The record gives the reactivity of an RNA of 177 nucleotides to DMS and 2A3.
[RMDB]
RNA sequence: GGGAACGACUCGAGUAGAGUCGAAAAGUAGGAUAAGUGGGAGCCCUCGGGCGCAAGUGAAAUACCACUACUUUUAACGUUAUUUUACUUAUUCCGUGGGUCGGAAGCGGGGCAUCGCCCCUCCUUUUAGUGACUUAUUAUUCGUAAUAAGUCACUAAAAAGAAACAACAACAACAAC
Reactivity to DMS in 0.01 (KOAc 150mM, MgCl2 10mM, bicine 150mM(pH8.5), 24C), signal-to-noise 5, nucleotides 027 to 126: g020u010a040g000g010a090u010a060a080g010u010g010g010g010a220g000c010c010c010u000c070g030g010g020c230g020c160a020a030g000u000g010a020a020a030u000a020c050c070a110c130u010a080c200u020u020u020u030a050a200c150g000u000u000a000u000u000u010u000a010c010u000u000a120u010u020c010c010g010u000g000g000g020u020c070g000g000a090a100g000c160g010g010g000g010c060a060u000c170g010c010c000c010c040u000c010c000u010u010u000
Reactivity to 2A3 in 0.01 (KOAc 150mM, MgCl2 10mM, bicine 150mM(pH8.5), 24C), signal-to-noise 9, nucleotides 027 to 126: g080u090a020g020g090a090u080a190a080g060u100g050g050g020a040g010c000c000c010u010c020g020g010g000c090g030c130a010a010g010u020g040a010a020a010u040a020c030c070a050c070u120a120c070u150u200u080u210a110a030c060g020u020u000a020u000u010u010u020a010c000u020u010a020u130u030c010c010g010u050g010g030g000u050c070g020g020a050a020g050c080g010g010g000g010c030a100u140c130g030c000c000c000c000u040c000c000u010u010u000

About this RNA: The data come from the RNA Mapping Database (RMDB), libraries RFM100 and RFMREP. The RNA was probed in 150 mM KOAc, 10 mM MgCl2 and 150 mM bicine (pH 8.5) at 24 C.